[RMDB]
RNA sequence: GGGAACGACUCGAGUAGAGUCGAAAAUGUCCUGGGGACAGGGUCGGGAGACCGCAGUGCAGUGCUGGUGGCCGGGCAGGUGCGGAGCUUGUGCCUGCCACCCUCCCUAGAGGGGCCCAUGCCACCCAACGGUAUCUCUGUUCGCAGAGAUACCGUUAAAAGAAACAACAACAACAAC
Reactivity to 2A3 in 0.01 (KOAc 150mM, MgCl2 10mM, bicine 150mM(pH8.5), 24C), signal-to-noise 1, nucleotides 027 to 126: u120g040u050c000c020u040g000g010g000g000a000c010a040g040g040g020u050c090g040g060g000a070g060a060c010c030g030c030a000g010u100g080c020a050g090u020g080c100u080g000g070u030g010g070c060c040g010g000g010c000a000g030g000u020g030c030g090g080a110g070c020u050u100g030u030g070c000c000u000g000c020c000a020c010c000c000u030c040c000c000u020a050g020a020g060g000g000g010c010c030c000a050u070g050c020c000a150c000c000c000
Reactivity to DMS in 0.01 (KOAc 150mM, MgCl2 10mM, bicine 150mM(pH8.5), 24C), signal-to-noise 2, nucleotides 027 to 126: u000g010u000c010c010u000g010g010g020g000a100c070a030g000g010g030u020c070g000g000g000a160g000a070c090c060g020c030a040g020u010g030c150a070g010u000g020c060u000g010g020u000g010g030c030c110g000g020g010c000a010g020g030u000g010c040g000g000a240g010c190u010u000g020u000g000c000c000u000g000c010c010a050c040c010c010u000c000c280c190u000a140g000a050g010g010g010g010c010c000c030a070u000g000c020c010a050c000c000c140